[RMDB]
RNA sequence: GGGAACGACUCGAGUAGAGUCGAAAAGAUAUGGACAUGUCAUUACCGAGCUCUGGUCUCGGAAACGAGACCUGAGCCUAGACAGUAAUGAGCAUGUCCUAAGUCAAAACUGCGGUUCGCCGCAGAACUGGGUAUGAAAGUUCGCUUUCAUACCCAGAAAAGAAACAACAACAACAAC
Reactivity to 2A3 in 0.01 (KOAc 150mM, MgCl2 10mM, bicine 150mM(pH8.5), 24C), signal-to-noise 2, nucleotides 027 to 126: g010a000u040a040u140g000g000a000c000a010u010g000u030c000a000u020u010a020c010c220g040a100g030c010u030c030u040g000g000u020c000u020c000g020g090a020a030a010c000g010a010g010a010c010c010u010g000a000g000c000c010u070a050g060a060c090a030g010u020a000a000u010g020a020g140c010a000u010g010u020c000c000u010a000a010g000u000c000a000a010a100a230c010u010g010c020g000g070u060u100c280g080c130c030g000c000a000g000a030a020
Reactivity to DMS in 0.01 (KOAc 150mM, MgCl2 10mM, bicine 150mM(pH8.5), 24C), signal-to-noise 2, nucleotides 027 to 126: g020a060u000a300u010g000g010a000c010a020u000g020u000c000a000u000u000a000c000c070g020a090g030c000u000c010u000g010g030u000c000u000c000g000g000a010a070a170c010g010a030g000a030c000c000u000g010a000g020c000c300u000a080g030a160c300a140g020u000a000a030u010g000a090g000c000a000u000g000u000c000c000u000a050a080g000u000c040a090a030a010a150c000u000g000c010g000g000u010u020c220g020c020c000g000c000a000g000a060a110